[RMDB]
RNA sequence: GGGAACGACUCGAGUAGAGUCGAAAAGAUAUGGACCAACUCCCCACCGCUCCACCCUUGUUUCCGAAGAACUUCUUCGGAAACGAAGAAGGGAGGAAACAAGGGUGAGCGAGGUUGGUCCUAAGUCGAAUCAGAUUUUGUUCGCAAAAUCUGAUUCAAAAGAAACAACAACAACAAC
Reactivity to DMS in 0.01 (KOAc 150mM, MgCl2 10mM, bicine 150mM(pH8.5), 24C), signal-to-noise 2, nucleotides 027 to 126: g000a100u040a200u000g000g010a010c010c010a020a030c030u000c210c000c000c080a300c090c000g000c030u000c080c090a010c000c000c000u010u010g000u000u000u000c000c010g050a150a190g000a120a210c010u000u000c000u000u000c000g010g020a040a070a060c010g000a000a000g010a020a010g020g000g010a060g000g000a010a000a010c000a000a030g020g010g010u000g000a020g000c000g030a020g030g000u000u000g000g020u000c000c000u000a020a090g000u030c220
Reactivity to 2A3 in 0.01 (KOAc 150mM, MgCl2 10mM, bicine 150mM(pH8.5), 24C), signal-to-noise 2, nucleotides 027 to 126: g120a100u300a220u300g030g010a000c000c010a010a000c000u230c080c030c000c010a010c020c000g030c040u150c140c110a050c010c020c000u000u010g000u020u000u020c050c010g120a270a050g000a050a020c010u000u000c010u010u000c000g030g030a020a030a010c000g000a000a000g000a020a010g000g000g000a040g030g000a000a010a000c010a010a000g020g010g010u000g000a000g000c010g000a000g000g000u000u010g000g000u000c000c000u010a050a010g160u160c110